[RMDB]
Structure probing data (2A3 and DMS) for a 177-nucleotide construct. The DMS profile rests on 7,645 reads. The data come from the RNA Mapping Database (RMDB), library M2PK50. 2A3 adducts were read by reverse transcription with SuperScript II with manganese. The reactions ran in a buffer of 150 mM KOAc, 10 mM MgCl2 and 150 mM bicine (pH 8.5), at 24 C.
RNA sequence: GGGAACGACUCGAGUAGAGUCGAAAACCCACGACUUUCGAGUCGUGGGAAAUAUAAUCAGCGGUAAAUUAUUAGCUCCGCUUACCGCUGAAGCGGAGCAUACACGUCUAGGAUUCGUCCUAGACAACGAUAUAGAAGGUUUCGACCUUCUAUAUCGAAAAGAAACAACAACAACAAC
Reactivity to 2A3 in 0.01 (KOAc 150mM, MgCl2 10mM, bicine 150mM(pH8.5), 24C), signal-to-noise 9, nucleotides 027 to 126: c000c000c000a000c000g000a000c000u060u120u180c190g110a010g000u010c000g000u010g000g010g010a000a070a000u200a010u040a040a170u030c010a000g010c010g140g210u180a070a090a060u190u220a170u100u210a120g000c000u000c000c000g010c020u000u020a150c010c010g000c010u010g000a000a000g000c000g000g000a000g000c000a000u090a020c130a010c080g000u000c000u000a000g000g010a010u020u050c150g040u010c060c000u000a000g000a000c000a000a000
Reactivity to DMS in 0.01 (KOAc 150mM, MgCl2 10mM, bicine 150mM(pH8.5), 24C), signal-to-noise 5, nucleotides 027 to 126: c000c000c000a030c000g010a010c000u000u010u010c160g000a010g030u000c000g030u000g000g010g000a010a010a040u000a100u010a100a110u000c010a020g000c000g010g010u010a040a040a050u000u010a090u010u010a120g000c000u000c000c000g010c020u000u010a060c030c010g000c000u000g000a020a010g000c010g010g000a020g020c030a140u010a060c200a100c150g000u000c000u000a010g010g010a030u000u010c180g000u000c000c010u000a010g000a000c010a030a050